An RNA of 177 nucleotides, treated with 2A3 and read out base by base. Reactivities are given for positions 27 through 126. It was measured as part of the RMDB library RFM100.
RNA sequence: GGGAACGACUCGAGUAGAGUCGAAAAGCCUCGCCGUCCCGGGGGGCGUCCCGCCUCCCACCCCGCCUCUGGACUUGUCUCUUUCUCCGCGCGCGCGGACAGAGCCGGCGUUUAGGCCCGAGCGAGCGCGGCCGAGACACUUCGGUGUCUCGGCCGCAAAAGAAACAACAACAACAAC
Reactivity to 2A3 in 0.01 (KOAc 150mM, MgCl2 10mM, bicine 150mM(pH8.5), 24C), signal-to-noise 1, nucleotides 027 to 126: g000c010c000u020c040g080c030c020g050u050c040c030c060g000g000g000g000g000g000c000g040u130c000c000c020g020c010c020u010c010c000c000a030c000c010c000c040g030c010c020u020c000u020g060g000a110c000u070u140g090u010c090u000c000u070u170u040c040u000c010c000g000c010g050c000g020c000g000c000g020g000a020c020a020g050a010g040c000c010g050g010c040g000u050u030u070a060g020g010c040c020c020g020a060g020c010g000a010g010c020
Background:
2A3 adducts were read by reverse transcription with SuperScript II with manganese.